The record gives the reactivity of an RNA of 207 nucleotides to 2A3. The 2A3 profile rests on 526 reads. For 2A3 the reverse transcriptase was SuperScript II with manganese. Source: RMDB library OK3TST, as collected in RNAgym.
[RMDB]
RNA sequence: GGGAACGACUCGAGUAGAGUCGAAAACUUCACAAGAGAAAAGAGAUUUCCAUUAGGCAGAAGUUUGCAUUAUGGCUUCUUAAACAUAGCUAACAGGAGAUUUUUAUGACCAGACACCAACGACGCCGCUACACCACUGGCGAUAAAAUCUUCCUUGGUAUAAGUGACACUUCGGUGUCACUUAUACAAAAGAAACAACAACAACAAC
Reactivity to 2A3 in 0.01 (KOAc 150mM, MgCl2 10mM, bicine 150mM(pH8.5), 24C), signal-to-noise 1, nucleotides 027 to 156: c030u150u150c050a050c030a030a050g150a010g050a070a040a090a030g080a010g020a120u080u070u000c020c000a020u030u070a050g040g000c030a000g010a030a050g090u080u120u140g030c020a030u050u070a020u210g010g030c010u030u020c000u090u110a040a110a020c050a070u130a080g060c070u060a090a040c030a110g070g000a020g000a030u000u000u000u030u100a230u150g030a130c030c020a020g100a110c030a030c050c030a090a070c000g080a060c040g010c030c030g050c080u060a040c030a060c030c080a030c100u040g020g020c040g040a000u050a040a090a010a000u040c060u070u020c020c010u080u040g100